[RMDB]
The record gives the reactivity of an RNA of 177 nucleotides to DMS and 2A3. For DMS, 27,117 sequencing reads were counted. The data come from the RNA Mapping Database (RMDB), library OK2TRN. The RNA was probed in 150 mM KOAc, 10 mM MgCl2 and 150 mM bicine (pH 8.5) at 24 C. 2A3 adducts were read by reverse transcription with SuperScript II with manganese.
RNA sequence: GGGAACGACUCGAGUAGAGUCGAAAAGCAUGACGCAUUAUCUCCAUACCAAAGAAUGAUCCGACAAUAUCUCCUUCCUAUUUGAUCAGCCUCUUAUCGUUCGUAAACGACGUAACUUGACGGAGAAUCUAAGAAUAGUAUUCGUACUAUUCUUAGAAAAAGAAACAACAACAACAAC
Reactivity to DMS in 0.01 (KOAc 150mM, MgCl2 10mM, bicine 150mM(pH8.5), 24C), signal-to-noise 9, nucleotides 027 to 126: g010c050a060u000g020a110c130g010c050a070u000u000a070u000c010u010c020c040a080u000a120c080c060a060a100a100g010a100a070u000g010a070u000c030c050g010a070c080a050a070u010a070u000c020u000c020c030u000u000c010c030u000a080u000u000u000g000a080u000c050a060g010c050c020u000c050u000u000a080u000c030g000u000u000c100g010u010a060a060a130c090g010a040c050g010u000a050a070c080u000u000g010a070c080g010g010a100g010a090a130
Reactivity to 2A3 in 0.01 (KOAc 150mM, MgCl2 10mM, bicine 150mM(pH8.5), 24C), signal-to-noise 9, nucleotides 027 to 126: g030c040a050u140g070a080c070g000c040a030u060u080a060u120c030u000c020c010a040u060a120c030c030a090a060a030g090a040a120u100g020a050u050c040c020g050a040c070a070a030u050a100u110c030u040c020c010u040u030c010c010u060a110u100u070u090g060a070u030c010a010g030c020c000u040c020u050u060a060u120c030g050u070u010c020g050u080a060a090a070c040g040a010c010g020u010a050a050c030u050u060g030a010c020g040g030a050g040a060a040